[RMDB]
RNA sequence: GGGAACGACUCGAGUAGAGUCGAAAAGCCAAAAACGCAUUCCUGCUGACCCCUGAAAACAUACCCACAAUAAUCUCAGUGACAGGCAAAAACUACGCCCAGUUACUCGAAAUGUCAACAGGACCACAGCUGAAACCAGAGACAGCUCUUGCUAAUGCAGUGCGUUAACGUUCGCGUUAACGCACUGAAAAGAAACAACAACAACAAC
Reactivity to 2A3 in 0.01 (KOAc 150mM, MgCl2 10mM, bicine 150mM(pH8.5), 24C), signal-to-noise 1, nucleotides 027 to 156: g050c000c020a040a070a010a010a000c050g020c040a080u000u070c010c000u000g020c030u030g090a110c020c000c020c000u040g040a030a040a030a010c020a080u180a080c000c030c000a040c050a070a030u210a110a130u080c060u050c100a030g000u000g010a000c000a000g000g000c020a030a110a010a080a110c110u110a070c170g020c030c010c000a010g010u010u040a020c000u010c040g090a060a060a020u090g020u020c000a050a000c000a030g050g010a000c010c000a020c060a020g020c010u020g020a040a010a030c040c030a070g010a010g040a110c010a010g010c000u010c010u050u060g000c030u010a000a000u030g000